[RMDB]
RNA sequence: GGGAACGACUCGAGUAGAGUCGAAAAGCUAUGAUCGCGAAUACUCCGUAGAGCCAUACUUGCCACCCGAGCGGAAUCGGCAUGCCCAGGCCGUGGGCGAUCGCCAGGUAGACACCCGAGGUGAGCAGGUUGUCUUUGGCUUCGGCCAAAGACAACCAAAAGAAACAACAACAACAAC
Reactivity to 2A3 in 0.01 (KOAc 150mM, MgCl2 10mM, bicine 150mM(pH8.5), 24C), signal-to-noise 1, nucleotides 027 to 126: g020c020u030a030u200g090a050u080c040g000c010g000a030a000u110a090c060u000c120c000g040u030a050g000a030g200c050c000a030u030a060c090u100u030g000c000c010a000c000c000c000g040a000g040c110g050g040a110a180u030c000g000g000c020a020u160g020c000c000c000a030g130g000c060c050g120u000g020g040g000c000g110a040u000c060g030c040c060a010g000g000u100a100g100a180c030a090c000c020c020g030a030g110g040u000g000a000g010c010a050

The data come from the RNA Mapping Database (RMDB), library OK1LIB.
Chemical mapping of a 177-nucleotide RNA with 2A3.
Conditions: 150 mM KOAc, 10 mM MgCl2 and 150 mM bicine (pH 8.5), 24 C.